[RMDB]
RNA sequence: GGGAACGACUCGAGUAGAGUCGAAAAACUCGCGACGGCUGGCGACCUGGCCAGGCAUUCCAACUGUCAAACUUACAAAGCUUUCUCGACAAUUGGUAUCCCUGUCAAGGUCUCAAUCCGUUCAGCGCUUAAAUGUGCAGUUCGCUGCACAUUUAAGAAAAGAAACAACAACAACAAC
Reactivity to 2A3 in 0.01 (KOAc 150mM, MgCl2 10mM, bicine 150mM(pH8.5), 24C), signal-to-noise 2, nucleotides 027 to 126: a000c010u000c020g000c000g010a010c010g010g010c060u030g060g020c070g020a020c020c000u010g030g020c030c020a000g000g000c000a000u020u000c010c000a000a010c000u010g000u020c020a040a090a080c020u130u210a190c140a140a210a020g060c050u170u170u080c130u130c180g000a000c000a000a000u000u000g000g010u010a000u030c000c010c000u000g010u010c020a090a030g010g000u010c000u010c010a000a040u020c000c000g030u080u040c080a000g010c000g010
Reactivity to DMS in 0.01 (KOAc 150mM, MgCl2 10mM, bicine 150mM(pH8.5), 24C), signal-to-noise 2, nucleotides 027 to 126: a120c020u010c020g050c020g030a000c010g000g010c260u020g000g050c260g010a040c020c000u010g010g020c110c030a020g020g010c300a120u000u000c000c000a000a020c050u010g000u000c010a070a290a090c040u010u000a120c200a140a060a040g000c120u000u000u040c150u010c160g000a000c020a000a010u000u010g000g000u000a020u000c300c000c000u010g010u000c010a070a010g010g010u000c010u010c050a080a060u000c020c010g020u000u000c030a090g020c000g030
Structure probing data (2A3 and DMS) for a 177-nucleotide construct. DMS adducts were read by reverse transcription with MarathonRT. 2A3 adducts were read by reverse transcription with SuperScript II with manganese.